[RMDB]
RNA sequence: GGGAACGACUCGAGUAGAGUCGAAAAUAGCUCAUCGUAUUCGUUUUUCUUCAUUUUUAAUGCGUAUUCUAUUGCCUCAUCAAAACUUUUGAUGUCAAUCGUGUCUAGUACGUAGGUGUUUAGUAACGUGUUUUUGACUACUAUGUCACCCGUUACGCAUGCCGAAAGCUUUCGAGCUUUCGGCAUGAAAAGAAACAACAACAACAAC
Reactivity to 2A3 in 0.01 (KOAc 150mM, MgCl2 10mM, bicine 150mM(pH8.5), 24C), signal-to-noise 1, nucleotides 027 to 156: u120a000g100c050u000c030a070u070c020g060u110a070u180u030c030g030u060u020u000u000u230c050u290u000c060a190u180u170u080u030u300a080a120u150g000c010g010u030a080u090u000c000u050a040u020u000g000c070c040u020c000a020u000c000a030a050a280a300c060u010u220u030u050g000a000u000g090u050c000a000a080u000c030g070u040g060u040c030u130a040g000u040a010c020g010u020a050g000g210u020g000u040u080u020a050g000u000a000a010c040g050u010g070u100u080u040u120u100g010a020c020u250a080c080u200a050u260g000u000c000a000c000c010c000g000u000u000a040c040g000